This 177-nucleotide RNA was probed chemically with 2A3. The RNA was probed in 150 mM KOAc, 10 mM MgCl2 and 150 mM bicine (pH 8.5) at 24 C.
RNA sequence: GGGAACGACUCGAGUAGAGUCGAAAACAGCGGGUAGUCUGCAAAUUUUUUUGUCCUUCGUUACGUAUUCCCAAUCGUCGACUAACACGCUCUUCAAUUUUAUGGGAAUUUGAAGGGAAAUCAAAAACCUCCUAUAUGCCUUCGGGCAUAUAGGAGGAAAAGAAACAACAACAACAAC
Reactivity to 2A3 in 0.01 (KOAc 150mM, MgCl2 10mM, bicine 150mM(pH8.5), 24C), signal-to-noise 3, nucleotides 027 to 126: c020a000g010c000g000g000g030u020a040g020u050c040u060g110c140a100a100a160u120u160u040u000u010u040u110g060u100c000c000u070u050c010g080u030u140a050c050g000u020a070u000u020c000c000c000a020a070u090c140g120u060c000g000a030c050u060a100a020c070a020c100g050c000u010c000u130u020c030a160a200u100u090u150u230a220u300g090g040g070a040a050u050u030u090g000a000a000g000g000g040a050a070a120u060c080a000a050a010a000a000
It was measured as part of the RMDB library OK1LIB.